Source: RMDB library TTRDEL, as collected in RNAgym. The record gives the reactivity of an RNA of 177 nucleotides to DMS and 2A3. 2A3 adducts were read by reverse transcription with SuperScript II with manganese.

[RMDB]
RNA sequence: GGGAACGACUCGAGUAGAGUCGAAAAGAUAUGGACCUCACACCUGCUAUAAUCUCGGAAACGAGGUAGCAGUGUGUAGGUCCUAAGUCAAAAGCCCGAAUAAUCGGUUCGCCGAUUAUUCGGGCAACAUUUGAUAAUGCUUCGGCAUUAUCAAAUGAAAAGAAACAACAACAACAAC
Reactivity to DMS in 0.01 (KOAc 150mM, MgCl2 10mM, bicine 150mM(pH8.5), 24C), signal-to-noise 3, nucleotides 027 to 126: g010a050u010a300u010g000g010a020c010c010u000c120a010c000a010c110c050u000g000c000u000a020u010a300a080u000c000u000c000g000g000a080a120a210c000g000a020g030g010u000a010g010c000a030g010u000g020u000g010u000a010g020g000u000c010c000u000a000a080g010u010c050a090a090a150a200g020c000c000c000g000a010a010u000a000a010u000c000g010g020u000u010c290g010c010c010g000a000u000u010a000u000u000c010g000g000g010c010a000a020
Reactivity to 2A3 in 0.01 (KOAc 150mM, MgCl2 10mM, bicine 150mM(pH8.5), 24C), signal-to-noise 2, nucleotides 027 to 126: g020a010u080a050u160g000g010a010c000c000u040c020a000c000a020c000c050u000g000c010u060a060u070a300a300u210c000u000c010g050g000a130a120a070c010g000a000g020g010u000a000g000c000a000g000u040g000u000g000u180a000g000g000u000c000c000u000a000a000g030u000c020a060a090a170a090g010c000c000c000g010a000a020u010a000a000u000c010g020g100u070u080c300g050c110c000g010a000u000u030a020u000u000c000g000g000g000c020a010a000
The RNA was probed in 150 mM KOAc, 10 mM MgCl2 and 150 mM bicine (pH 8.5) at 24 C.
For 2A3, 4,371 sequencing reads were counted.